[RMDB]
RNA sequence: GGGAACGACUCGAGUAGAGUCGAAAAGGCCGAGCUCCAACCCAGGGAGGGAAUAUAUACAAGGCGCGAUUUAAGGCGCAAGUAUGUAUAGGGAAGUGAAGAAGCACCGAAAACUUCACACGGCCGACCUAAUUUAGUGCUUCGGCACUAAAUUAGGAAAAGAAACAACAACAACAAC
Reactivity to 2A3 in 0.01 (KOAc 150mM, MgCl2 10mM, bicine 150mM(pH8.5), 24C), signal-to-noise 1, nucleotides 027 to 126: g000g030c010c010g020a020g040c030u000c040c010a170a190c020c040c020a020g000g140g000a070g010g000g040a080a010u010a000u000a030u010a010c000a130a300g120g000c000g000c010g000a030u000u300u150a140a030g230g000c020g000c000a000a060g030u010a000u000g000u000a000u060a040g090g000g020a160a080g040u010g000a010a050g030a100a010g050c100a030c100c020g060a070a070a000a040c000u000u000c010a000c020a020c010g000g020c000c000g000a010
Reactivity to DMS in 0.01 (KOAc 150mM, MgCl2 10mM, bicine 150mM(pH8.5), 24C), signal-to-noise 2, nucleotides 027 to 126: g030g030c000c000g020a240g010c070u020c020c010a110a200c030c000c000a150g000g000g010a110g020g000g010a130a060u000a010u000a020u010a010c000a040a260g000g000c010g000c000g020a120u010u000u020a130a150g050g000c010g010c000a030a160g050u000a000u010g000u010a000u000a150g020g000g000a090a130g000u010g000a060a010g000a180a080g020c100a070c200c100g000a030a070a070a030c000u000u000c020a000c010a250c030g010g000c000c050g000a120

Overview
The record gives the reactivity of an RNA of 177 nucleotides to 2A3 and DMS. In probing experiments dimethyl sulfate is read out at A N1 and C N3, which are open when not base-paired. It was measured as part of the RMDB library OK2TRN. For DMS the reverse transcriptase was MarathonRT.